[RMDB]
RNA sequence: GGGAACGACUCGAGUAGAGUCGAAAAAUUGAAUAACAUAGCACUAGUGGAUCCCUUAAUUAGGAUCCGCACCUACCGGAUCCAGGAUCCGCGGAUCCGGUAACAUUAAGACAGUGUGUGGGAUCCAUCUGUAAAGCAAUUUCGAUUGCUUUACAGAAAAAGAAACAACAACAACAAC
Reactivity to DMS in 0.01 (KOAc 150mM, MgCl2 10mM, bicine 150mM(pH8.5), 24C), signal-to-noise 5, nucleotides 027 to 126: a080u010u000g000a120a090u010a090a090c040a070u000a090g020c030a020c040u000a100g040u000g010g000a050u000c000c010c060u000u000a070a120u000u010a080g010g000a020u000c000c010g030c020a030c130c060u000a020c040c010g020g000a010u000c000c030a130g020g000a080u000c060c050g020c140g020g000a010u000c010c000g000g010u000a020a040c110a080u010u010a070a100g010a100c200a030g010u000g020u000g020u000g030g020g000a020u000c010c020a210
Reactivity to 2A3 in 0.01 (KOAc 150mM, MgCl2 10mM, bicine 150mM(pH8.5), 24C), signal-to-noise 4, nucleotides 027 to 126: a010u100u120g030a050a080u150a130a020c050a060u090a040g060c020a010c060u030a030g030u020g050g000a030u030c010c020c000u040u120a150a120u140u130a060g000g000a000u000c010c010g000c000a010c010c000u010a010c000c010g010g000a000u000c010c010a020g050g050a090u040c030c010g040c030g050g000a000u010c000c000g000g000u000a000a000c000a010u120u160a060a030g110a040c050a030g020u010g000u000g010u030g170g030g000a000u000c000c000a010